This 177-nucleotide RNA was probed chemically with 2A3 and DMS. The DMS profile rests on 1,145 reads. The 2A3 profile rests on 2,068 reads. Conditions: 150 mM KOAc, 10 mM MgCl2 and 150 mM bicine (pH 8.5), 24 C. 2A3 adducts were read by reverse transcription with SuperScript II with manganese.
RNA sequence: GGGAACGACUCGAGUAGAGUCGAAAAGAUAUGGAAAUAUGAUCCUCCCACACCGUUGAAAUCGGAAACGAUGGAGGUGUGUGAGAGGGUUUGUAUUUCCUAAGUCAAAGCCGGCUUCGGCCGGCAACCCACAGUAAGUGUUCGCACUUACUGUGGGAAAAGAAACAACAACAACAAC
Reactivity to 2A3 in 0.01 (KOAc 150mM, MgCl2 10mM, bicine 150mM(pH8.5), 24C), signal-to-noise 1, nucleotides 027 to 126: g060a040u060a060u160g000g000a020a000a020u030a020u040g010a000u000c000c000u000c030c020c000a000c000a000c000c020g190u270u000g020a030a030a010u000c010g000g000a140a020a000c020g010a010u010g010g010a010g000g000u000g000u000g010u160g040a300g010a010g030g000g000u020u060u150g000u010a000u000u000u030c000c000u000a100a020g010u030c060a120a020a030g000c020c010g040g000c000u070u120c180g200g000c050c020g060g000c000a010a010
Reactivity to DMS in 0.01 (KOAc 150mM, MgCl2 10mM, bicine 150mM(pH8.5), 24C), signal-to-noise 1, nucleotides 027 to 126: g020a000u010a300u000g000g020a000a000a010u000a000u000g010a000u000c000c010u000c000c000c000a010c000a000c010c000g000u000u060g000a110a190a010u000c000g000g000a150a080a210c000g010a010u010g010g000a070g020g000u000g030u000g000u040g040a150g030a010g000g000g030u000u000u000g100u000a020u000u000u000c000c000u000a020a090g000u000c020a120a100a110g000c000c000g010g030c000u000u010c160g020g030c000c010g000g000c040a000a000